[RMDB]
RNA sequence: GGGAACGACUCGAGUAGAGUCGAAAACGAUCCCAUUUUGUAACGAUGGUAUACACGAUACUAAAAAAAUAUCUGCUGAUCUUAAUAAGAUAGAUGGAUUGUAUCGUUGCAAUUCAUAUUCUGAGGAAGUCAUAAAUAGGUUCGCCUAUUUAUGACUAAAAGAAACAACAACAACAAC
Reactivity to 2A3 in 0.01 (KOAc 150mM, MgCl2 10mM, bicine 150mM(pH8.5), 24C), signal-to-noise 6, nucleotides 027 to 126: c060g050a080u010c010c000c020a010u080u090u020u030g030u020a020a000c010g000a020u040g010g050u050a050u040a090c230a040c100g070a040u030a030c030u130a090a050a000a020a010a060a090u120a010u020c020u020g000c020u070g100a050u020c000u050u110a190a120u160a230a000g020a010u020a030g110a150u080g010g000a010u000u070g040u070a000u020c010g000u010u020g000c000a010a000u010u010c030a040u070a130u200u060c040u050g050a070g080g110a110
Reactivity to DMS in 0.01 (KOAc 150mM, MgCl2 10mM, bicine 150mM(pH8.5), 24C), signal-to-noise 8, nucleotides 027 to 126: c250g010a180u000c000c000c000a190u000u000u000u000g010u000a030a050c100g010a030u000g010g000u000a020u010a070c130a070c150g010a050u000a010c010u030a000a000a030a120a100a110a100u000a020u000c010u000g000c060u000g010a030u000c020u000u000a090a080u010a110a070g010a020u000a020g010a090u000g010g000a070u000u000g010u000a030u000c010g020u000u000g010c000a010a020u010u000c090a060u000a110u000u000c050u000g010a130g010g000a130
This 177-nucleotide RNA was probed chemically with 2A3 and DMS. The reactions ran in a buffer of 150 mM KOAc, 10 mM MgCl2 and 150 mM bicine (pH 8.5), at 24 C. The DMS profile rests on 11,705 reads. The data come from the RNA Mapping Database (RMDB), library OK2TST. For 2A3, 9,433 sequencing reads were counted. For DMS the reverse transcriptase was MarathonRT.